[RMDB]
RNA sequence: GGGAACGACUCGAGUAGAGUCGAAAAGAGUGAGGCUAGUAAAGAAGCUAGUCAGCAGAUAGAAGUUGAGGAGGUAAACGCCCAGCGCGAUGAUCCCUUGACGGAAACUGUUGAAGCUGAUAAGUCCGAUGCUACCGAGGAUUCUUUGGUGAAGAGGCUGCAUUAUUAGGUUCGCCUAAUAAUGCAGAAAAGAAACAACAACAACAAC
Reactivity to 2A3 in 0.01 (KOAc 150mM, MgCl2 10mM, bicine 150mM(pH8.5), 24C), signal-to-noise 5, nucleotides 027 to 156: g080a010g050u100g030a030g020g010c040u020a020g040u120a110a120a100g110a110a010g040c010u040a040g130u000c010a000g000c000a010g040a120u160a050g020a060a010g010u010u010g010a010g010g020a090g020g040u070a090a140a050c010g000c000c040c060a120g010c090g000c010g170a140u090g010a040u060c000c010c000u000u010g010a000c010g000g000a020a030a000c010u000g000u020u020g010a020a010g010c030u020g020a070u060a140a040g030u030c030c000g020a020u070g030c030u030a050c010c040g020a040g030g030a060u090u030c020u070u080u100g030g020u090g050a090a040g030a050g100g000
Reactivity to DMS in 0.01 (KOAc 150mM, MgCl2 10mM, bicine 150mM(pH8.5), 24C), signal-to-noise 3, nucleotides 027 to 156: g000a080g010u000g010a110g010g010c060u000a050g000u000a070a060a150g000a120a130g020c010u000a080g040u000c020a200g030c010a120g010a120u010a050g010a290a230g000u000u010g010a050g010g000a100g000g020u010a060a140a110c010g020c000c070c100a130g010c110g050c010g020a120u000g010a100u010c020c010c000u000u000g010a030c010g000g000a160a070a070c010u010g010u010u000g000a090a140g050c030u000g020a130u000a050a080g020u000c030c000g000a100u000g010c020u000a040c050c010g000a090g010g000a130u000u000c030u000u000u010g000g000u020g020a060a100g000a110g000g020
Description
An RNA of 207 nucleotides, treated with 2A3 and DMS and read out base by base. The data come from the RNA Mapping Database (RMDB), library OK3TST. Reactivities are given for positions 27 through 156.